[RMDB]
RNA sequence: GGGAACGACUCGAGUAGAGUCGAAAAGCUCUGGAAUUGAGGCCCCUCUAACAAUAAUCCAAAACUACUCCGCAGAGUAAUCUGCCGAAUCGUAGGAUGCCCAUUACUAUCUAUUUUUGGAGCAUCUAAAACUGUCAGUGCUUCGGCACUGACAGAAGCAUGCUAGGAUUUUCGAAUCCUAGCAUGCAAAAGAAACAACAACAACAAC
Reactivity to 2A3 in 0.01 (KOAc 150mM, MgCl2 10mM, bicine 150mM(pH8.5), 24C), signal-to-noise 2, nucleotides 027 to 156: g020c000u000c010u040g050g160a200a120u120u070g010a050g000g020c000c070c000c020u200c090u140a160a110c070a120a230u180a010a020u050c060c000a100a040a020a050c000u050a070c020u000c020c010g000c040a000g010a000g090u080a170a160u000c000u010g070c050c010g030a010a010u160c060g020u070a050g030g020a000u010g020c000c010c010a010u040u010a010c040u090a050u270c000u080a280u140u060u020u000u020g020g000a140g000c000a000u000c000u070a040a040a000a090c010u000g000u000c000a010g000u000g000c010u050u040c150g070g000c030a000c000u010g000a010c000a000g010a000a000

This 207-nucleotide RNA was probed chemically with 2A3. The RNA was probed in 150 mM KOAc, 10 mM MgCl2 and 150 mM bicine (pH 8.5) at 24 C. Reactivities are rounded to 0.1 and cut off at 0 and 3. 2A3 adducts were read by reverse transcription with SuperScript II with manganese.